This 177-nucleotide RNA was probed chemically with DMS and 2A3.
RNA sequence: GGGAACGACUCGAGUAGAGUCGAAAAGAUUGAGGACGCAGGGGCCGGCACGAUAGGUGGUUUUAUCAUUCCUCAAAAACCAAAGAAAAUUGAAGGAUCAGUAUAUUAUUACGGACCUGGAGUCUGGAACGUAGAAUGUAUUCGUACAUUCUACGUUAAAAGAAACAACAACAACAAC
Reactivity to DMS in 0.01 (KOAc 150mM, MgCl2 10mM, bicine 150mM(pH8.5), 24C), signal-to-noise 9, nucleotides 027 to 126: g000a160u010u000g020a140g000g010a040c120g020c080a080g020g000g010g030c040c040g010g000c120a060c130g000a060u010a040g020g020u000g000g000u000u000u000u000a060u000c070a150u010u000c020c010u020c120a040a030a040a060a080c080c050a060a090a120g010a060a060a070a100u000u000g000a110a090g000g000a050u000c030a040g010u000a040u000a080u010u010a080u010u000a090c010g000g000a090c010c010u000g000g000a160g010u000c030u000g000g000
Reactivity to 2A3 in 0.01 (KOAc 150mM, MgCl2 10mM, bicine 150mM(pH8.5), 24C), signal-to-noise 5, nucleotides 027 to 126: g050a020u120u170g040a060g030g020a020c020g000c070a020g010g020g060g070c020c000g030g030c060a020c070g050a080u060a050g050g080u050g020g040u020u030u020u050a070u040c030a040u040u040c010c000u020c000a020a030a020a030a050c120c040a110a120a020g130a060a120a040a050u090u110g040a090a020g040g010a050u030c010a010g060u050a060u010a010u280u050a080u120u080a030c010g010g010a000c000c020u050g040g000a070g030u020c030u060g020g030
Description: It was measured as part of the RMDB library OK2TRN. The DMS profile rests on 13,236 reads. Reactivities are given for positions 27 through 126. The RNA was probed in 150 mM KOAc, 10 mM MgCl2 and 150 mM bicine (pH 8.5) at 24 C.